[RMDB]
RNA sequence: GGGAACGACUCGAGUAGAGUCGAAAAACGCUUCACAAUGUGCGGCAAAGAAACAUUGUUUAUGCAAAGGCACUUCGCAAUGUGUGCUCAACCAUUGCUUAUUCAAACACGCUUCACAAUGUGCGACAAAACUUCACGGUCUUCGGACCGUGAAGAACCUGCGUACAGAGUUCGCUCUGUACGCAGGAAAAGAAACAACAACAACAAC
Reactivity to 2A3 in 0.01 (KOAc 150mM, MgCl2 10mM, bicine 150mM(pH8.5), 24C), signal-to-noise 2, nucleotides 027 to 156: a010c010g000c030u030u020c020a030c000a050a010u010g020u000g000c020g060g040c100a170a000a110g120a040a100a000c000a010u020u030g080u000u030u100a100u090g010c030a060a040a080g110g000c030a030c060u120u120c130g030c060a060a080u050g090u050g020u030g070c150u090c110a040a030c020c000a030u010u020g010c000u070u080a050u080u110c040a030a050a060c080a020c080g030c010u060u080c070a050c040a220a070u120g020u020g060c020g040a030c110a030a040a030a040c000u000u000c000a000c010g000g010u000c000u010u040c050g040g020a000c000c000g010u010g000a000a000g000a000a000
Chemical mapping of a 207-nucleotide RNA with 2A3. Values cover nucleotides 27 to 156.